[RMDB]
RNA sequence: GGGAACGACUCGAGUAGAGUCGAAAAGAAUCACCGUACCUAUUUAGGUUUACGCUCCAAGAUCGGUGGAUAGCAGCCCUAACAAUAUCUAGGAGAACUGUGCUAUGUUUAGAAGAUUAGGUAGUCUAUUACACAGCCAUGUUCGCAUGGCUGUGAACUACCCAGUUAGUUUCGACUAACUGGGUAGAAAAGAAACAACAACAACAAC
Reactivity to 2A3 in 0.01 (KOAc 150mM, MgCl2 10mM, bicine 150mM(pH8.5), 24C), signal-to-noise 6, nucleotides 027 to 156: g050a020a020u060c020a000c020c010g020u040a030c000c010u070a150u220u210u290a040g000g000u010u050u040a030c040g010c010u020c010c020a020a010g020a060u030c020g000g010u030g050g030a040u060a050g070c080a020g000c010c010c000u050a100a030c070a110a080u080a020u180c020u030a010g000g020a030g020a040a020c040u070g010u030g080c030u080a050u110g050u050u110u040a120g030a190a030g000a120u120u070a050g080g040u030a020g030u020c050u050a110u070u110a080c010a000c000a000g000c000c000a020u010g030u080u050c160g000c120a000u000g000g000c000u000g000u000g000a000a000
Reactivity to DMS in 0.01 (KOAc 150mM, MgCl2 10mM, bicine 150mM(pH8.5), 24C), signal-to-noise 4, nucleotides 027 to 156: g000a120a080u000c010a090c020c010g030u000a050c020c010u000a220u000u000u010a020g010g020u000u010u000a080c070g030c020u000c030c010a060a080g020a060u010c020g020g010u010g010g020a080u000a090g010c080a120g040c010c010c010u000a070a090c050a080a110u000a090u000c050u000a130g000g000a090g010a090a070c050u010g020u000g020c020u000a080u000g000u000u000u010a100g000a110a130g010a100u000u000a050g020g020u000a090g010u000c030u010a100u010u000a220c010a010c000a010g000c000c010a030u000g020u000u010c290g000c020a030u000g000g000c010u000g000u000g020a010a090